Chemical mapping of a 177-nucleotide RNA with DMS and 2A3.

[RMDB]
RNA sequence: GGGAACGACUCGAGUAGAGUCGAAAACAGCGCGCGAUGCUCGACCGCACGGCGCAUGGAGGCUUGCAGGGGUGCGGUCUCGGUGCCGCGCAACGUCAGCUUCAGCCAGAGUUGGCGCAGCGCGCCGAAAAAUACACUCAUUCGUGAGUGUAUUUUUAAAAGAAACAACAACAACAAC
Reactivity to DMS in 0.01 (KOAc 150mM, MgCl2 10mM, bicine 150mM(pH8.5), 24C), signal-to-noise 9, nucleotides 027 to 126: c060a140g010c020g010c010g010c010g000a050u010g000c010u010c120g010a020c020c240g000c020a060c020g000g010c010g020c020a030u040g000g010a020g010g000c010u000u050g070c010a070g000g060g010g020u000g020c010g010g000u000c000u010c000g010g010u010g000c000c000g000c060g000c010a040a040c280g000u000c020a020g000c000u000u010c050a220g010c020c010a070g010a160g010u040u010g000g010c010g020c180a150g010c000g010c000g010c010c070g000
Reactivity to 2A3 in 0.01 (KOAc 150mM, MgCl2 10mM, bicine 150mM(pH8.5), 24C), signal-to-noise 9, nucleotides 027 to 126: c020a000g010c000g000c010g000c010g060a050u070g020c030u070c120g030a020c020c030g000c010a020c020g030g000c030g000c020a020u100g220g020a020g030g020c080u300u300g000c100a080g050g120g220g130u120g020c020g010g010u000c000u010c000g020g010u040g000c010c000g000c000g000c010a010a010c030g000u010c010a010g000c000u090u070c040a020g010c010c010a090g040a070g260u190u140g020g000c020g000c020a020g000c010g000c000g000c000c000g010
Annotation
The reactions ran in a buffer of 150 mM KOAc, 10 mM MgCl2 and 150 mM bicine (pH 8.5), at 24 C. 2A3 adducts were read by reverse transcription with SuperScript II with manganese.